[RMDB]
RNA sequence: GGGAACGACUCGAGUAGAGUCGAAAACAUUCCGAAGGGGACCGUCCCUCGGUAAUGGCGAAUGGGACCCAGAACUCUCUUUAGCUUCCGAAAGAGAAGCAAGAGAAAACUGGCUCUCCCUUAGCCAAAGCGAUCCGCUUCGGCGGAUCGAAAAGAAACAACAACAACAAC
Reactivity to DMS in 0.01 (KOAc 150mM, MgCl2 10mM, bicine 150mM(pH8.5), 24C), signal-to-noise 4, nucleotides 027 to 129: c050a080u030u040c030c030g010a150a080g000g000g000g030a200c170c290g110u060c020c050c010u010c030g000g000u040a010a180u000g000g050c020g030a090a070u000g000g000g000a000c020c000c000a030g060a090a200c210u000c010u000c000u030u020u040a180g040c040u020u010c000c000g100a180a050a260g000a070g040a010a000g060c010a030a010g010a000g040a000a000a050a160c030u030g040g020c060u020c030u000c080c030c050u080u030a200g010c000c010a000a160a080g040
Reactivity to 2A3 in 0.01 (KOAc 150mM, MgCl2 10mM, bicine 150mM(pH8.5), 24C), signal-to-noise 4, nucleotides 027 to 129: c020a080u090u000c020c000g030a090a080g000g010g010g060a090c060c060g270u230c040c010c000u010c000g000g000u010a050a150u090g000g000c010g020a020a020u050g000g000g000a030c060c030c010a000g000a020a050c030u000c000u030c000u030u040u160a070g000c000u000u000c000c000g260a290a210a040g140a050g010a000a000g010c000a000a000g000a000g000a010a040a000a000c000u000g010g000c020u010c000u000c030c000c000u000u050a040g000c000c000a000a010a000g050